[RMDB]
RNA sequence: GGGAACGACUCGAGUAGAGUCGAAAAGCUAUCUCAUGAGGUAAAUGCGUGAUCACAUAGCCAAGAGAUGCCUUUUUGUUCUAAUGAUCACUGUAAGACCUUCUUGAGAGACAGUCCAAGUCUCUCCAGCACAAUGGAAAAUUGCAUUUUCUAUGCACGAGCUAUCGCGAUUCGUCGCGAUAGCUCGAAAAGAAACAACAACAACAAC
Reactivity to 2A3 in 0.01 (KOAc 150mM, MgCl2 10mM, bicine 150mM(pH8.5), 24C), signal-to-noise 1, nucleotides 027 to 156: g080c000u050a090u100c000u050c000a030u070g000a020g030g020u120a070a110a110u090g010c020g000u030g000a000u000c000a020c080a240u210a020g020c010c020a060a010g040a000g020a090u260g060c010c090u060u160u000u000u080g020u090u170c020u050a000a020u100g000a000u000c030a020c050u160g000u050a050a040g080a110c000c000u150u180c050u150u000g000a010g000a000g000a000c080a020g020u000c020c010a070a030g070u080c000u000c000u000c010c000a020g020c100a050c050a000a150u170g010g000a020a050a000a050u080u070g100c050a020u000u060u180u140c000u120a060u040g000c040a020
An RNA of 207 nucleotides, treated with 2A3 and read out base by base. The 2A3 profile rests on 416 reads. It was measured as part of the RMDB library OK3TST. The reactions ran in a buffer of 150 mM KOAc, 10 mM MgCl2 and 150 mM bicine (pH 8.5), at 24 C. Values cover nucleotides 27 to 156. 2A3 adducts were read by reverse transcription with SuperScript II with manganese.